[RMDB]
RNA sequence: GGGAACGACUCGAGUAGAGUCGAAAAUUCGGUCCUCUGGAGCGGACCGUCUGCUCCGUCAGGAUGUGGAGGUAUCGCGCCCUCCUCUGCGCGUAUGUACAUCGAUACGGUUAUGUCGCCUUUGUGUCGGCGUUUGACACUUACACAUACCGGAUAAACGUAGGCCAUUAUUCGUAAUGGCCUACGUAAAAGAAACAACAACAACAAC
Reactivity to 2A3 in 0.01 (KOAc 150mM, MgCl2 10mM, bicine 150mM(pH8.5), 24C), signal-to-noise 1, nucleotides 027 to 156: u060u040c010g050g010u020c010c050u020c040u180g010g160a100g000c030g050g060a120c100c000g030u080c000u030g080c000u050c040c040g070u050c010a020g000g020a000u070g020u010g010g020a000g000g020u030a020u020c010g000c000g050c000c000c000u000c080c000u020c000u000g140c090g000c000g020u100a040u010g000u040a030c020a100u000c090g140a120u070a300c070g080g050u120u020a020u030g070u040c020g000c030c040u070u010u040g120u000g020u040c000g000g000c070g020u000u020u030g010a000c000a000c000u060u070a020c010a000c000a020u040a250c000c030g000g010a020u090a000a120